Record summary
Structure probing data (2A3 and DMS) for a 177-nucleotide construct. 2A3 adducts were read by reverse transcription with SuperScript II with manganese. DMS adducts were read by reverse transcription with MarathonRT. Values cover nucleotides 27 to 126.

[RMDB]
RNA sequence: GGGAACGACUCGAGUAGAGUCGAAAAAACUAUGCGAGUAGUUCACAGCUAAGUCUGUAUGGAUAUGCUGAAACGCGACGAGAUGGGCUGAUAGAGACAUGAAGAGAACACGUGCAUAACUGGAAACACCAUGCUAGAAUUUCGAUUCUAGCAUGGUAAAAGAAACAACAACAACAAC
Reactivity to 2A3 in 0.01 (KOAc 150mM, MgCl2 10mM, bicine 150mM(pH8.5), 24C), signal-to-noise 8, nucleotides 027 to 126: a000a000c060u060a050u050g020c040g020a020g020u030a010g000u040u020c060a030c020a050g010c020u100a180a030g030u010c010u040g210u160a090u230g080g000a050u070a040u190g000c010u030g010a050a070a020c050g010c030g030a030c020g020a010g020a080u070g020g040g000c010u040g010a060u050a090g120a000g020a030c020a050u120g050a060a040g050a010g000a090a010c020a000c070g040u060g000c020a040u040a140a040c040u090g060g030a030a070a000c020
Reactivity to DMS in 0.01 (KOAc 150mM, MgCl2 10mM, bicine 150mM(pH8.5), 24C), signal-to-noise 7, nucleotides 027 to 126: a060a040c040u010a030u030g010c050g000a040g020u000a050g020u000u010c050a190c040a050g000c040u000a070a130g010u010c010u010g000u030a070u030g010g010a070u020a270u010g010c000u000g010a060a080a070c120g010c090g010a050c090g000a090g000a040u010g010g010g010c020u010g010a060u020a060g020a090g010a050c070a040u010g000a060a060g000a120g010a060a060c100a040c050g010u010g010c060a040u010a050a070c070u020g000g010a090a050a080c200